[RMDB]
RNA sequence: GGGAACGACUCGAGUAGAGUCGAAAAGUGCUGAGCCAUAUCGAGGGCGACACGACACCAAGCUCCCCUGCGGCGGCGGUGGGGGCCGUCUUGCCGCCCAGGCAAGAGCCGUCACCAGUGACGAAGCGCUUUCGCAUUAAUUCGUUAAUGCGAAAGCAAAAGAAACAACAACAACAAC
Reactivity to DMS in 0.01 (KOAc 150mM, MgCl2 10mM, bicine 150mM(pH8.5), 24C), signal-to-noise 4, nucleotides 027 to 126: g030u010g000c030u000g000a300g010c020c010a080u020a110u020c230g020a130g020g000g000c020g020a030c040a050c070g000a060c040a120c170c130a100a160g010c030u000c010c000c000c030u000g010c030g000g030c170g010g020c040g010g010u000g020g010g000g010g000c030c090g000u000c000u000u000g000c000c000g020c010c020c020a070g010g000c030a050a100g000a120g010c020c030g000u000c030a090c050c080a130g020u010g010a100c050g010a100a150g000c100
Reactivity to 2A3 in 0.01 (KOAc 150mM, MgCl2 10mM, bicine 150mM(pH8.5), 24C), signal-to-noise 2, nucleotides 027 to 126: g140u090g010c030u030g000a020g050c010c000a080u090a080u280c130g070a300g010g010g000c010g010a010c020a010c010g050a020c010a020c040c080a040a030g020c000u020c000c020c000c000u000g020c010g250g000c050g090g010c010g000g040u220g060g000g000g000g000c010c000g000u000c010u000u010g010c010c000g000c000c040c000a020g010g000c010a030a080g050a020g120c020c000g080u010c010a050c090c040a060g080u040g050a040c050g050a110a000g060c030
This 177-nucleotide RNA was probed chemically with DMS and 2A3. High 2A3 reactivity points to a flexible backbone, as in loops and unpaired stretches. Conditions: 150 mM KOAc, 10 mM MgCl2 and 150 mM bicine (pH 8.5), 24 C. For 2A3 the reverse transcriptase was SuperScript II with manganese. Values cover nucleotides 27 to 126. For 2A3, 3,257 sequencing reads were counted. The data come from the RNA Mapping Database (RMDB), library OK2TST.